[RMDB]
RNA sequence: GGGAACGACUCGAGUAGAGUCGAAAAGAUAUGGAGUUGAACUACAAGGUUUGUAGGCGUUGAAAAAUCUGUUAUGUCGGAAACGACAUAACAGAUUUGGAGCCUAUUAUCUUGCAACUCCUAAGUCCUCAUAUUAAGGGUUCGCCCUUAAUAUGAGAAAAGAAACAACAACAACAAC
Reactivity to 2A3 in 0.01 (KOAc 150mM, MgCl2 10mM, bicine 150mM(pH8.5), 24C), signal-to-noise 4, nucleotides 027 to 126: g060a040u130a080u230g010g000a020g020u020u020g030a150a070c070u300a050c300a020a010g040g080u190u250u260g070u060a000g000g000c070g210u300u100g050a110a140a000a000a010u010c000u000g000u000u000a000u000g020u000c000g030g050a050a100a110c020g000a010c000a000u000a000a010c000a000g000a000u000u000u010g000g000a000g000c000c010u010a020u000u030a000u010c010u000u020g040c000a010a000c010u000c000c000u010a130a010g020u030c000
Reactivity to DMS in 0.01 (KOAc 150mM, MgCl2 10mM, bicine 150mM(pH8.5), 24C), signal-to-noise 4, nucleotides 027 to 126: g010a080u010a300u010g010g000a020g030u000u010g010a080a070c090u030a300c000a000a010g000g020u000u010u010g020u000a010g000g010c010g020u000u010g000a100a090a010a010a000u000c000u000g010u000u000a010u000g010u010c000g010g010a160a120a240c010g010a020c000a000u000a000a000c000a000g010a000u000u000u000g000g000a150g030c010c000u000a010u000u010a000u000c000u000u010g000c000a000a010c010u000c000c000u010a050a100g000u000c040

Record summary: The data come from the RNA Mapping Database (RMDB), library TTRINS. This 177-nucleotide RNA was probed chemically with 2A3 and DMS. The reactions ran in a buffer of 150 mM KOAc, 10 mM MgCl2 and 150 mM bicine (pH 8.5), at 24 C. Values cover nucleotides 27 to 126. The DMS profile rests on 5,888 reads. For DMS the reverse transcriptase was MarathonRT. For 2A3 the reverse transcriptase was SuperScript II with manganese. The 2A3 profile rests on 6,812 reads.